[RMDB]
Structure probing data (DMS and 2A3) for a 177-nucleotide construct.

RNA sequence: GGGAACGACUCGAGUAGAGUCGAAAAAGGGAAACCGAGUCUGAAUAGGGCGACUUAGUAUCAUGAUGUAGACCCGAAACCUAGUGACCUAUCCAUGAGCAGGGUGAAGGUGUGGUAAGACGCACUGCUUCAUUAACGGGUUCGCCCGUUAAUGAAGAAAAGAAACAACAACAACAAC
Reactivity to DMS in 0.01 (KOAc 150mM, MgCl2 10mM, bicine 150mM(pH8.5), 24C), signal-to-noise 4, nucleotides 027 to 126: a080g010g010g010a090a080a100c080c020g000a100g030u000c030u000g020a110a110u000a080g010g020g020c080g000a080c110u000u000a040g010u000a100u010c050a080u010g010a090u010g000u010a090g000a110c020c010c010g000a070a070a100c070c020u010a070g000u010g000a090c050c030u000a040u010c070c030a070u010g010a050g020c070a090g000g010g010u000g010a060a100g010g010u000g000u010g000g000u010a080a110g000a140c100g000c040a040c050u000g010
Reactivity to 2A3 in 0.01 (KOAc 150mM, MgCl2 10mM, bicine 150mM(pH8.5), 24C), signal-to-noise 2, nucleotides 027 to 126: a000g070g000g020a040a020a030c020c010g010a050g060u000c010u010g020a070a100u110a170g000g000g030c010g000a020c050u060u080a060g010u050a090u170c050a050u070g090a030u130g070u090a040g070a100c010c000c020g000a050a020a020c010c000u040a050g060u020g130a080c030c000u050a040u070c010c040a040u070g050a020g000c060a040g080g000g000u040g030a050a030g000g000u010g010u010g060g000u030a060a010g060a020c010g000c000a010c010u020g040

For DMS the reverse transcriptase was MarathonRT.